[RMDB]
RNA sequence: GGGAACGACUCGAGUAGAGUCGAAAAGCACACUCACCUGUUCCGUCUUAGCAACCACAGUAUAUGGUCCUGACGAACACCAUGGCCACUGAUAAAAGUUAUCUAGGGGGCAGAUGGGUGUCGACCGGGCGGUGAGAUCGUUCGCGAUCUCACCGCCAAAAGAAACAACAACAACAAC
Reactivity to 2A3 in 0.01 (KOAc 150mM, MgCl2 10mM, bicine 150mM(pH8.5), 24C), signal-to-noise 1, nucleotides 027 to 126: g040c050a000c000a000c000u090c000a000c000c000u000g040u070u010c000c000g110u060c030u080u090a000g030c000a000a010c000c000a000c000a030g060u040a120u080a110u240g000g000u060c000c060u060g040a060c140g090a100a030c060a020c030c070a000u090g000g060c010c020a030c000u000g000a000u030a080a140a050a040g000u060u040a060u060c040u040a000g050g000g000g000g000c000a010g000a010u000g000g000g000u000g000u010c000g000a000c000c000g020
The record gives the reactivity of an RNA of 177 nucleotides to 2A3.
For 2A3 the reverse transcriptase was SuperScript II with manganese.
It was measured as part of the RMDB library OK1LIB.
The RNA was probed in 150 mM KOAc, 10 mM MgCl2 and 150 mM bicine (pH 8.5) at 24 C.